RNA sequence: GGGAACGACUCGAGUAGAGUCGAAAACAGUUACCAGAGGUAGGAAAAGCAAAGGCCAGGCAGGACAUGAGGGGCCCUUGCACUGGCUGGUUCUCCCUGCCUUCACCACCCUCCAGGUGAAUGACUGGGUGAAUAAUGAUUGACUGAGGAGGUAAUACGGACGCACGUCAUUCGUGACGUGCGUCCGAAAAGAAACAACAACAACAAC
Reactivity to 2A3 in 0.01 (KOAc 150mM, MgCl2 10mM, bicine 150mM(pH8.5), 24C), signal-to-noise 1, nucleotides 027 to 156: c010a040g000u040u120a090c000c010a030g010a020g040g040u070a040g020g000a040a110a110a050g090c090a110a050a050g030g000c000c000a000g000g010c000a000g030g000a010c030a060u130g000a140g000g010g020g000c010c000c000u000u060g030c080a180c210u000g000g000c010u000g000g070u050u100c080u080c020c020c010u020g000c000c000u020u000c010a010c000c000a010c000c000c000u040c010c010a090g000g010u080g000a050a130u050g060a080c000u050g000g020g100u180g060a030a020u210a040a040u080g120a040u110u150g040a040c050u080g020a020g010g010a000g060g020u040a060a030u100a040